[RMDB]
RNA sequence: GGGAACGACUCGAGUAGAGUCGAAAAGAUUGGCGUACAACAGUGGGGACGUGUCCCCGACGUGGAGCCAAGAGGAAUGAGCCUCGCCAACAGCAGCCGUUUACGGCUGGAAAGGGGAAAAACAAAGGCACAAUUUAACUUUCGAGUUAAAUUGUGCAAAAGAAACAACAACAACAAC
Reactivity to DMS in 0.01 (KOAc 150mM, MgCl2 10mM, bicine 150mM(pH8.5), 24C), signal-to-noise 4, nucleotides 027 to 126: g010a250u000u000g020g010c020g000u050a130c040a090a030c040a120g000u160g010g000g020g000a050c040g030u030g030u000c000c000c000c000g000a030c150g000u020g000g000a290g000c020c000a000a030g010a070g000g000a130a070u030g000a170g030c010c010u000c010g000c030c020a040a100c200a050g030c030a010g010c090c000g020u020u000u030a080c010g020g010c000u000g000g000a020a070a040g000g000g000g000a040a050a020a080a100c160a060a160a120g000
Reactivity to 2A3 in 0.01 (KOAc 150mM, MgCl2 10mM, bicine 150mM(pH8.5), 24C), signal-to-noise 4, nucleotides 027 to 126: g130a060u030u020g000g000c020g050u290a040c060a080a010c030a110g080u070g050g020g000g040a030c140g180u180g080u110c010c000c000c000g010a030c010g000u000g020g020a030g000c020c010a000a010g050a030g030g080a070a110u180g000a010g090c010c010u020c000g050c030c010a040a050c020a030g050c000a000g000c000c010g000u050u160u220a100c020g040g000c000u060g000g000a010a000a030g020g000g000g090a030a030a000a030a020c090a050a110a020g150